Conditions: 150 mM KOAc, 10 mM MgCl2 and 150 mM bicine (pH 8.5), 24 C. Chemical mapping of a 207-nucleotide RNA with 2A3 and DMS. DMS adducts were read by reverse transcription with MarathonRT. Source: RMDB library OK3TST, as collected in RNAgym. For DMS, 4,714 sequencing reads were counted.
RNA sequence: GGGAACGACUCGAGUAGAGUCGAAAAGACAUGGGACAGAUUCUUUGUAUGUAUGAUCUCAUUCACUUUUCAGGACAAUCAGGAAAGGUAGGCAUUAUUAUUCUUCAUUUGAUGUAUGAGACAAGUGAAGAUCAGAAAAGUCAGGUAACUUGCUGGAGGUGAUAAAUUUAUUCGUAAAUUUAUCACCAAAAGAAACAACAACAACAAC
Reactivity to 2A3 in 0.01 (KOAc 150mM, MgCl2 10mM, bicine 150mM(pH8.5), 24C), signal-to-noise 5, nucleotides 027 to 156: g030a010c030a040u050g000g020g010a010c040a020g110a180u070u070c080u080u190u140g100u120a110u110g080u020a090u100g110a170u010c030u000c030a050u100u080c040a100c060u070u040u060u040c030a020g000g080a030c050a070a060u060c010a030g010g080a050a040a010g060g000u030a020g050g000c030a020u000u030a020u070u030a040u110u060c010u020u020c020a050u010u020u090g090a100u110g050u130a080u120g050a060g000a010c000a010a010g010u020g070a000a000g000a020u060c010a000g080a040a090a020a000g040u040c020a000g020g040u080a130a070c030u030u120g050c000u060g000g020a040
Reactivity to DMS in 0.01 (KOAc 150mM, MgCl2 10mM, bicine 150mM(pH8.5), 24C), signal-to-noise 2, nucleotides 027 to 156: g010a140c080a110u010g030g000g010a080c050a090g000a100u000u000c050u000u020u010g010u000a090u020g010u000a100u010g020a090u000c010u000c020a100u000u000c080a120c030u000u000u000u010c060a080g010g010a090c060a050a090u000c060a070g010g000a040a080a120g020g000u000a050g030g030c030a050u010u000a050u000u000a090u000u000c030u000u010c020a080u010u000u030g000a110u000g020u010a050u000g020a140g010a070c040a010a010g030u000g030a040a020g020a010u010c040a110g000a050a060a050a080g020u000c040a070g010g020u000a090a090c050u000u000g010c000u000g010g000a300